[RMDB]
RNA sequence: GGGAACGACUCGAGUAGAGUCGAAAAGAUAUGGACACCAUUUUCGUCAACGAAGAACGCUUUCGGAAACGAAAGCGGGAGUCGACGAUUUGGUGUCCUAAGUCAAAGGCCCUGUUCGCAGGGCCAACCAUUCACACCGGUUCGCCGGUGUGAAUGGAAAAGAAACAACAACAACAAC
Reactivity to 2A3 in 0.01 (KOAc 150mM, MgCl2 10mM, bicine 150mM(pH8.5), 24C), signal-to-noise 1, nucleotides 027 to 126: g010a010u090a060u170g020g010a020c010a010c020c010a050u040u030u110u120c010g000u000c040a030a010c030g160a200a080g010a070a010c010g010c000u000u000u030c000g060g020a090a070a100c010g010a020a000a020g000c000g000g000g000a000g050u030c020g000a000c000g010a000u000u010u010g020g010u000g000u000c000c000u030a000a000g020u010c020a000a080a000g000g010c000c000c000u000g030u020u050c300g000c090a000g000g040g000c000c000a000a000
Reactivity to DMS in 0.01 (KOAc 150mM, MgCl2 10mM, bicine 150mM(pH8.5), 24C), signal-to-noise 1, nucleotides 027 to 126: g000a010u000a300u000g000g000a020c000a000c000c000a030u000u000u040u000c000g030u000c000a010a030c030g000a140a070g000a120a200c020g000c000u010u000u000c000g000g000a090a100a250c010g010a000a000a000g000c000g000g000g010a050g020u010c050g010a010c020g000a010u000u000u000g020g040u010g000u000c000c000u020a000a070g000u010c020a040a170a180g000g010c000c000c040u000g020u000u000c120g020c000a010g000g000g000c000c010a000a010